[RMDB]
RNA sequence: GGGAACGACUCGAGUAGAGUCGAAAAGGGCUUGACGCAUCGCCCGAAUAGGAUGCAUGUGCUUUUGCACUAAGAUAAAUGUCCGUAUAGUAGGGGACAUAGAACCUACUCAUUAAUGUCCGAAGAGUCUGGGACGAUCAUCAGGCUAGACUAAGAAGGUAUUACGAGUCUUCGGACUCGUAAUACCAAAAGAAACAACAACAACAAC
Reactivity to 2A3 in 0.01 (KOAc 150mM, MgCl2 10mM, bicine 150mM(pH8.5), 24C), signal-to-noise 2, nucleotides 027 to 156: g010g000g000c000u030u000g000a000c000g020c080a060u010c000g000c000c020c000g000a040a060u100a080g000g080a010u010g060c020a080u060g020u000g050c060u000u220u300u300g000c000a040c050u030a080a000g030a060u090a110a150a060u230g010u020c110c030g020u100a080u060a040g010u020a010g050g000g020g020a000c030a080u090a050g020a000a000c000c000u010a040c060u040c030a030u060u250a140a000u080g040u000c010c000g000a140a020g060a060g070u000c040u140g030g000g090a130c010g000a040u010c010a000u030c000a000g010g000c000u050a000g040a090c040u040a120a000g040a200a000